[RMDB]
RNA sequence: GGGAACGACUCGAGUAGAGUCGAAAAUUGGGGCAAGUUCCUUGGAAGAGGACAGCAUGGAGGGUGAUACUCCCGUUCAUCCCUGAGUUGCUCGUGCGUACGAUCCGUUUUCUUUGAGUCGCGUUGUCUAUGAAAACAGGUUCGCCUGUUUUCAUAGAAAAGAAACAACAACAACAAC
Reactivity to 2A3 in 0.01 (KOAc 150mM, MgCl2 10mM, bicine 150mM(pH8.5), 24C), signal-to-noise 2, nucleotides 027 to 126: u040u040g010g000g020g020c040a090a040g080u180u050c000c000u010u030g040g050a040a030g020a020g020g040a040c010a040g040c040a040u070g030g030a050g040g010g020u010g030a030u060a130c010u060c000c020c010g030u030u040c010a070u110c010c010c010u030g050a070g040u080u060g040c010u020c020g020u030g060c020g000u030a090c030g020a050u000c030c030g060u020u010u080u060c040u050u080u100g030a030g020u020c020g000c030g110u080u090g050u000
Reactivity to DMS in 0.01 (KOAc 150mM, MgCl2 10mM, bicine 150mM(pH8.5), 24C), signal-to-noise 3, nucleotides 027 to 126: u020u010g020g010g000g010c080a040a090g010u000u010c020c010u000u010g010g050a160a170g020a070g010g000a060c070a090g030c090a050u000g010g010a100g010g020g000u000g000a100u000a070c100u000c010c020c020g000u000u000c020a080u010c020c010c030u010g010a130g010u000u000g010c020u000c060g020u010g010c050g000u010a060c080g000a070u010c030c040g000u000u000u000u000c030u000u000u010g010a060g000u010c030g010c070g000u010u000g000u010